[RMDB]
RNA sequence: GGGAACGACUCGAGUAGAGUCGAAAAGCUGAAGAGCUCAGUGGCCAUGGAACUGGUCCGCAAGCAGCGUGGGCUCACGGUCGCCCAACGCACGCACCACUUGGUGUUUGCGGGACCGCCCGGGACCGGAGCCAUGUCUUUUCGAAGACAUGGCUCCAAAAGAAACAACAACAACAAC
Reactivity to DMS in 0.01 (KOAc 150mM, MgCl2 10mM, bicine 150mM(pH8.5), 24C), signal-to-noise 2, nucleotides 027 to 126: g020c060u010g000a110a110g000a090g020c030u000c010a080g020u000g010g010c010c000a080u010g000g000a110a100c130u000g020g020u000c000c000g050c010a090a060g020c120a060g010c050g030u000g020g010g000c060u000c060a210c090g000g010u010c100g010c020c030c020a090a150c020g020c010a060c140g000c000a000c020c020a270c300u000u010g030g040u000g010u000u000u010g010c000g000g010g000a030c030c010g000c060c000c060g010g010g010a090c060c110
Reactivity to 2A3 in 0.01 (KOAc 150mM, MgCl2 10mM, bicine 150mM(pH8.5), 24C), signal-to-noise 2, nucleotides 027 to 126: g000c030u090g050a080a020g030a110g090c010u010c090a080g030u080g060g010c050c070a140u140g090g040a110a070c080u100g000g000u030c010c010g000c020a080a080g060c040a030g000c030g050u050g010g010g000c030u070c010a060c070g060g040u090c020g050c000c040c000a030a010c000g010c010a000c020g000c000a020c000c000a150c210u140u300g000g020u010g020u020u010u010g010c000g000g010g010a030c000c030g000c000c010c020g020g050g020a030c020c050

This 177-nucleotide RNA was probed chemically with DMS and 2A3. The reactions ran in a buffer of 150 mM KOAc, 10 mM MgCl2 and 150 mM bicine (pH 8.5), at 24 C. For DMS the reverse transcriptase was MarathonRT. Values cover nucleotides 27 to 126. The DMS profile rests on 1,424 reads. It was measured as part of the RMDB library OK2TRN. Values are in units of 0.01, from 0 to 300, in steps of 10.